This 177-nucleotide RNA was probed chemically with 2A3. Values cover nucleotides 27 to 126. The reactions ran in a buffer of 150 mM KOAc, 10 mM MgCl2 and 150 mM bicine (pH 8.5), at 24 C. 2A3 is a SHAPE reagent: it acylates the 2'-hydroxyl of flexible nucleotides of all four kinds. The 2A3 profile rests on 227 reads.
RNA sequence: GGGAACGACUCGAGUAGAGUCGAAAACAACUUUAUAGCCUGACAGUAAAUUUCCAUGUAUCUGUUAACAUCACUUACAUAAGAUGUUAACACAAUUGUCAGUGAGCAAAAUGAACUUAACAUGGACUGCGGAGCUGGGAUUCGUCCCAGCUCCGCAAAAAGAAACAACAACAACAAC
Reactivity to 2A3 in 0.01 (KOAc 150mM, MgCl2 10mM, bicine 150mM(pH8.5), 24C), signal-to-noise 1, nucleotides 027 to 126: c050a050a020c000u260u300u040a170u240a140g030c000c000u000g000a000c000a000g120u170a080a080a080u240u120u000c000c000a000u000g000u050a050u000c000u000g000u000u000a000a000c000a000u000c000a030c170u190u300a140c070a160u300a300a180g000a000u000g000u000u000a000a000c000a000c100a120a120u000u280g000u000c140a140g000u210g070a000g000c000a000a000a140a290u120g000a000a100c000u000u160a050a000c120a000u000g000g000a000c020